The record gives the reactivity of an RNA of 207 nucleotides to DMS and 2A3. The reactions ran in a buffer of 150 mM KOAc, 10 mM MgCl2 and 150 mM bicine (pH 8.5), at 24 C. For 2A3 the reverse transcriptase was SuperScript II with manganese.
RNA sequence: GGGAACGACUCGAGUAGAGUCGAAAAUAUUUGCUCUUUAUCUGCAAAUACAUGCCUAUCAGGAUAUGUUGACUGUGAUAAAAUGACUUAACAUUUAGAAAGUGACAGUAUGGUUAAUAAAAUUGGGUCAUUAAUUCAAGAUAUGUGCAUAUGUUUACCGCUAUUUAUAUUUCGAUAUAAAUAGCGGAAAAGAAACAACAACAACAAC
Reactivity to DMS in 0.01 (KOAc 150mM, MgCl2 10mM, bicine 150mM(pH8.5), 24C), signal-to-noise 1, nucleotides 027 to 156: u020a000u010u000u000g000c010u020c020u020u000u000a090u020c060u000g010c000a050a010a010u000a050c030a060u000g020c040c030u000a110u000c110a180g010g000a050u000a020u000g010u000u010g000a170c030u000g000u010g000a110u000a090a150a060a030u000g000a060c010u000u000a060a170c010a110u010u010u000a130g010a080a090a090g080u010g010a060c030a170g010u010a080u010g020g020u000u000a040a150u010a020a010a080a150u000u000g010g020g000u000c000a040u000u010a060a170u010u010c000a030a070g000a150u000a060u000g020u000g030c010a040u000a070u000g010u000u010u000a200
Reactivity to 2A3 in 0.01 (KOAc 150mM, MgCl2 10mM, bicine 150mM(pH8.5), 24C), signal-to-noise 3, nucleotides 027 to 156: u100a010u000u020u020g000c010u060c010u110u270u150a200u090c080u040g000c020a010a050a010u050a040c050a030u070g020c020c000u060a100u130c060a050g070g000a080u070a030u160g080u070u030g050a080c070u050g020u030g150a030u060a030a160a010a020u050g030a010c010u030u020a120a010c050a100u090u080u040a110g100a140a100a040g110u090g070a000c010a010g090u180a050u150g110g030u120u090a120a030u100a050a150a040a060u090u080g030g000g010u010c020a020u020u020a130a100u060u100c050a060a000g020a050u050a050u060g060u040g040c030a040u080a030u140g040u000u100u010a040